[RMDB]
RNA sequence: GGGAACGACUCGAGUAGAGUCGAAAACAAUCAGGUCCGACAUAGUAAGCGGUAAACAGCCGCCGAACUCAGUACCUUUAUGGAAGGAUGACUGGUACCCUGCCUUUAGGCUAAAACACUCCUUUGAUGUAGUCGCUCGGACGCUGCUUGCAUGGCACGGUUUACGCGGACCGUGUUUCAUGGGCGGUACUACUAUGCAGUUACCUUUUUCGCGUGAGAUUCAGCAUUACUGUACGAAGGGGACAAUUUUUAUUUUAUGACAACAAACAACUAGCUUCGGCUAGUUGAAAAGAAACAACAACAACAAC
Reactivity to 2A3 in 0.01 (KOAc 150mM, MgCl2 10mM, bicine 150mM(pH8.5), 24C), signal-to-noise 4, nucleotides 027 to 266: c030a000a050u090c010a010g000g030u010c000c020g020a030c040a050u050a020g010u040a050a010g020c030g020g020u090a230a160a150c040a070g040c010c010g000c000c000g020a030a030c070u100c110a050g080u110a170c030c010u150u280u130a170u180g070g040a060a060g040g010a020u040g090a030c020u010g020g010u070a070c010c010c030u020g000c010c010u200u260u180a110g020g000c040u060a050a030a050a050c090a060c020u040c000c000u010u020u060g050a060u070g020u010a010g040u040c040g010c030u010c040g150g130a090c030g050c030u100g070c090u100u240g020c020a010u030g000g010c000a000c010g010g030u010u020u110a050c050g020c030g010g000a000c010c000g000u000g010u020u100u110c010a020u020g000g000g010c010g010g020u020a010c000u010a010c000u010a030u090g020c000a020g030u040u090a130c020c000u120u150u070u100u150c010g010c020g020u030g020a040g020a070u180u220c040a020g000c000a010u060u120a050c000u010g010u010a010c030g010a000a000g020g020g010g040a010c040a030a030u100u050u040u090u080a300u110u140u100u110a170u190g080a070c060a120a010c060a030a210a010
Reactivity to DMS in 0.01 (KOAc 150mM, MgCl2 10mM, bicine 150mM(pH8.5), 24C), signal-to-noise 3, nucleotides 027 to 266: c060a090a050u010c080a050g000g000u000c010c020g010a170c140a080u000a040g010u020a260a260g010c000g010g000u020a040a130a150c230a260g000c000c020g020c020c020g010a120a060c130u010c140a070g030u010a120c050c030u000u020u020a060u010g000g010a100a080g000g000a050u000g010a100c070u000g000g000u000a140c050c030c050u000g020c020c020u000u000u000a080g000g000c040u000a040a060a100a090c200a150c050u000c000c030u010u000u000g010a070u000g000u010a020g000u000c040g010c050u020c010g010g020a060c070g030c030u010g010c100u010u000g010c040a020u000g000g000c000a020c010g000g000u000u000u010a030c070g020c060g010g000a020c000c010g020u000g010u000u000u020c010a030u010g010g010g010c010g000g010u010a050c010u010a030c030u010a100u000g010c030a040g020u000u010a050c100c070u000u000u000u000u010c010g000c000g010u000g010a090g010a120u030u020c130a060g000c130a090u020u010a010c020u000g000u000a070c050g010a010a030g000g000g000g010a070c090a040a020u010u020u010u000u010a070u030u020u040u010a100u030g000a090c100a040a090c190a040a070a150
Conditions: 150 mM KOAc, 10 mM MgCl2 and 150 mM bicine (pH 8.5), 24 C. This 307-nucleotide RNA was probed chemically with 2A3 and DMS. The 2A3 profile rests on 8,345 reads.